[RMDB]
RNA sequence: GGGAACGACUCGAGUAGAGUCGAAAAGACGCUGAUGCGAUCGACUGUAAGAUAGAUAGAGUGAGCAGACAGAUACGUACGGCAAGUAUCGUCGCCAGAACUACAGUCGCAAAUUGCCGUACGAAGACACUAGGAGCGGAUUCGUCCGCUCCUAGUGAAAAGAAACAACAACAACAAC
Reactivity to DMS in 0.01 (KOAc 150mM, MgCl2 10mM, bicine 150mM(pH8.5), 24C), signal-to-noise 3, nucleotides 027 to 126: g000a160c070g020c030u020g000a110u070g040c010g000a110u060c000g010a010c000u000g000u000a020a070g000a160u020a040g010a150u040a010g010a170g000u050g010a120g080c010a010g020a060c040a080g000a130u000a010c020g000u010a020c000g000g060c010a000a030g010u000a020u000c040g010u000c020g010c000c010a100g000a070a110c060u010a030c010a000g000u000c000g000c210a020a160a120u000u000g040c000c000g010u000a080c060g000a150a090g000a220
Reactivity to 2A3 in 0.01 (KOAc 150mM, MgCl2 10mM, bicine 150mM(pH8.5), 24C), signal-to-noise 5, nucleotides 027 to 126: g070a000c030g000c030u160g060a100u240g020c020g070a090u040c030g010a010c000u000g000u070a160a040g030a190u200a080g110a080u140a050g160a060g160u110g050a040g030c080a050g030a040c010a010g050a040u050a110c010g020u020a000c000g000g000c010a010a030g020u020a040u080c030g010u000c010g000c010c030a060g050a120a010c010u030a010c010a020g000u020c000g000c050a070a080a010u040u010g000c000c010g000u010a010c040g030a040a000g070a000
Structure probing data (DMS and 2A3) for a 177-nucleotide construct. Reactivities are given for positions 27 through 126. The RNA was probed in 150 mM KOAc, 10 mM MgCl2 and 150 mM bicine (pH 8.5) at 24 C. The data come from the RNA Mapping Database (RMDB), library OK1LIB.